[RMDB]
Conditions: 150 mM KOAc, 10 mM MgCl2 and 150 mM bicine (pH 8.5), 24 C. This 207-nucleotide RNA was probed chemically with 2A3 and DMS. For 2A3, 8,696 sequencing reads were counted. The DMS profile rests on 2,655 reads. 2A3 adducts were read by reverse transcription with SuperScript II with manganese. Source: RMDB library RNAMAK, as collected in RNAgym.
RNA sequence: GGGAACGACUCGAGUAGAGUCGAAAACAAAUCGCUGGGAGUCAUUUUCAUUUAGACACAGAGCUCUACUGAAGCGCGCACGGUAGAGCGACGAAGUGUCAGGAAUGAUUUGACUCCUGUGCUGAAGCGCGCACGGCAACCGAAAGGUGCGAAAGAAGUAAUAAUGUGUCUUCGGACACAUUAUUACAAAAGAAACAACAACAACAAC
Reactivity to 2A3 in 0.01 (KOAc 150mM, MgCl2 10mM, bicine 150mM(pH8.5), 24C), signal-to-noise 3, nucleotides 027 to 156: c010a000a060a090u040c000g000c020u020g010g000g000a000g000u000c010a010u010u020u140u150c000a010u030u030u080a050g000a000c000a000c010a000g000a010g010c000u000c000u000a010c000u030g060a240a080g020c000g000c000g000c010a000c010g000g000u000a000g010a010g010c000g030a050c000g010a000a010g000u000g010u000c000a000g080g200a010a000u000g000a000u000u000u000g000a000c000u000c000c000u000g000u000g000c000u000g010a130a060g000c010g000c000g010c000a010c010g000g000c000a000a000c010c000g060a100a030a010g010g010u010g000c000g000a050a060a020g090a100a020
Reactivity to DMS in 0.01 (KOAc 150mM, MgCl2 10mM, bicine 150mM(pH8.5), 24C), signal-to-noise 1, nucleotides 027 to 156: c040a050a120a060u000c030g050c010u000g020g000g000a030g040u000c000a000u000u000u000u000c000a040u020u000u000a170g030a050c000a020c020a000g000a180g020c010u000c010u000a010c000u010g030a040a010g020c020g000c000g000c000a300c050g030g010u000a020g040a010g010c000g000a100c000g020a140a190g020u000g020u000c000a110g020g010a040a020u000g020a050u000u000u000g010a030c020u010c010c010u010g050u000g010c000u000g000a060a040g050c000g030c030g000c000a300c040g010g000c000a010a070c000c040g000a100a020a170g020g070u000g010c020g020a060a080a080g000a120a210